[RMDB]
RNA sequence: GGGAACGACUCGAGUAGAGUCGAAAAGAUGUAGGGGCAACCCCGACACCGCACAACCCCGAUGGGUCAGCGGUCUUGAGCGGGCAUUUGCCUUCGAUGAGAGACCGUGUUAGCGUUCGGGGAACAUAACUCAACUUUGUUUCGACAAAGUUGAGUUAAAAGAAACAACAACAACAAC
Reactivity to DMS in 0.01 (KOAc 150mM, MgCl2 10mM, bicine 150mM(pH8.5), 24C), signal-to-noise 3, nucleotides 027 to 126: g020a060u010g030u000a100g000g010g000g040c220a120a150c070c010c010c000g010a070c100a090c020c020g020c130a100c140a080a040c000c000c000c140g020a080u010g010g010g010u010c080a120g030c000g000g000u010c000u000u000g010a150g010c010g000g000g000c000a270u010u020u040g000c020c000u010u020c080g020a130u030g000a170g010a020g000a020c000c000g010u010g010u000u020a130g010c000g040u020u000c020g010g040g000g020a090a140c150a060u040
Reactivity to 2A3 in 0.01 (KOAc 150mM, MgCl2 10mM, bicine 150mM(pH8.5), 24C), signal-to-noise 5, nucleotides 027 to 126: g150a080u120g020u060a090g000g030g010g050c110a130a130c020c000c000c000g020a000c000a030c030c030g110c010a080c020a050a110c000c000c000c020g060a020u100g100g020g170u070c030a010g000c000g020g000u000c000u020u030g010a020g010c030g000g010g000c010a140u060u150u300g000c010c000u030u030c060g160a280u100g030a020g000a000g000a010c000c010g010u000g030u040u130a070g010c060g050u030u000c000g000g000g000g000a010a000c010a050u080
Conditions: 150 mM KOAc, 10 mM MgCl2 and 150 mM bicine (pH 8.5), 24 C. An RNA of 177 nucleotides, treated with DMS and 2A3 and read out base by base. Values cover nucleotides 27 to 126.